RNA sequence: GGGAACGACUCGAGUAGAGUCGAAAAGAUAUGGACUUAGUGAGCGAUAAGCUCCUGUCGGAAACGACAGAAGAGCUUUUGACGCUCUCUAAGUCCUAAGUCAAAGUUGGUGGUUCGCCACCAACAACCCUGAUAGAUAGUUCGCUAUCUAUCAGGGAAAAGAAACAACAACAACAAC
Reactivity to 2A3 in 0.01 (KOAc 150mM, MgCl2 10mM, bicine 150mM(pH8.5), 24C), signal-to-noise 8, nucleotides 027 to 126: g020a000u010a010u060g000g000a000c000u000u000a000g010u010g040a000g010c050g260a300u070a300a010g000c000u000c000c000u000g000u000c000g000g010a020a010a000c000g020a010c010a020g050a190a020g000a020g010c020u040u080u120u300g300a230c050g000c000u000c000u000c000u000a000a000g000u000c000c000u000a000a000g000u000c020a040a070a100g000u010u010g000g010u010g020g060u030u090c300g070c070c000a000c000c000a000a000c000a000a010
Reactivity to DMS in 0.01 (KOAc 150mM, MgCl2 10mM, bicine 150mM(pH8.5), 24C), signal-to-noise 6, nucleotides 027 to 126: g010a030u000a070u010g000g000a020c000u000u000a000g010u010g000a020g020c010g020a120u010a010a010g010c000u000c000c010u000g010u000c000g010g010a010a020a050c000g010a010c000a000g000a160a140g000a010g020c000u000u000u000u000g010a230c100g020c000u000c000u000c000u000a000a010g000u000c000c000u000a000a050g000u000c010a140a140a150g000u000u000g000g020u000g010g010u010u020c300g010c010c000a010c010c000a010a000c010a100a160
The data come from the RNA Mapping Database (RMDB), library TTRDES. This 177-nucleotide RNA was probed chemically with 2A3 and DMS. For 2A3 the reverse transcriptase was SuperScript II with manganese. The 2A3 profile rests on 42,939 reads.